An RNA of 207 nucleotides, treated with 2A3 and read out base by base. Source: RMDB library M2RFPK, as collected in RNAgym. For 2A3, 750 sequencing reads were counted.

RNA sequence: GGGAACGACUCGAGUAGAGUCGAAAAGCAGUAUCUCGUUAGGCGAGGCUCCUAUACAAACACAGGUUGCUGAUCUGACGACGUCGGGAGACGCCCAAGAUUAGGACAGGAUAUAUCGAACCAAGGUGAACCUGUCCAGGGUUCGCCCUGGACAGAAGUACCCACACUUCUUCGGAAGUGUGGGUACAAAAGAAACAACAACAACAAC
Reactivity to 2A3 in 0.01 (KOAc 150mM, MgCl2 10mM, bicine 150mM(pH8.5), 24C), signal-to-noise 1, nucleotides 027 to 156: g040c050a030g020u050a110u140c090u000c010g060u060u090a160g080g040c020g000a030g010g000c040u030c010c030u100a120u080a190c140a020a160a000c070a020c030a060g000g040u080u140g040c010u000g020a080u000c000u030g020a010c030g010a000c000g000u020c000g050g020g040a200g010a020c010g130c000c000c020a040a010g030a070u000u120a010g000g040a000c010a020g020g130a050u080a060u080a090u180c060g050a020a010c020c010a040a030g130g010u030g020a010a030c000c000u000g000u000c000c000a000g020g000g020u020u090c170g030c000c000c000u000g000g000a000c000a000g010a010a020